[RMDB]
RNA sequence: GGGAACGACUCGAGUAGAGUCGAAAAUGACAGUGUACAGGCGCGAAAGCGUCUGUCAAUUAGCAAUGACUGUAUGCUAAUUGUCUAUUGUGAAAACAAUAGGAUGCUGUCUAACAGUCAUUGAUACGAUCUAGAGGAAUUUCGAUUUUUCUAGAUCAAAAGAAACAACAACAACAAC
Reactivity to 2A3 in 0.01 (KOAc 150mM, MgCl2 10mM, bicine 150mM(pH8.5), 24C), signal-to-noise 7, nucleotides 027 to 126: u070g000a000c000a000g000u000g000u020a000c000a000g000g000c000g000c000g040a070a040a050g010c000g010u000c000u000g000u000c000a000a000u000u000a000g000c000a010a050u060g000a000c000u000g000u010a010u040g000c000u000a000a000u000u000g000u000c000u000a000u000u010g010u010g100a060a040a000a010c000a000a000u000a000g000g000a000u000g000c000u000g000u000c000u000a020a000c000a000g000u000c000a010u030u250g050a030u040a060c100
Reactivity to DMS in 0.01 (KOAc 150mM, MgCl2 10mM, bicine 150mM(pH8.5), 24C), signal-to-noise 7, nucleotides 027 to 126: u010g010a010c000a000g010u000g010u000a020c000a010g010g000c010g010c000g010a140a120a170g000c010g010u000c000u000g000u000c000a000a000u000u000a000g000c010a050a100u000g000a010c010u000g010u000a200u010g000c000u000a000a010u000u000g010u000c000u000a000u000u000g010u000g000a130a070a160a020c000a010a010u000a000g010g000a010u000g010c000u000g000u000c000u010a100a020c000a000g000u000c000a210u030u030g010a140u030a090c210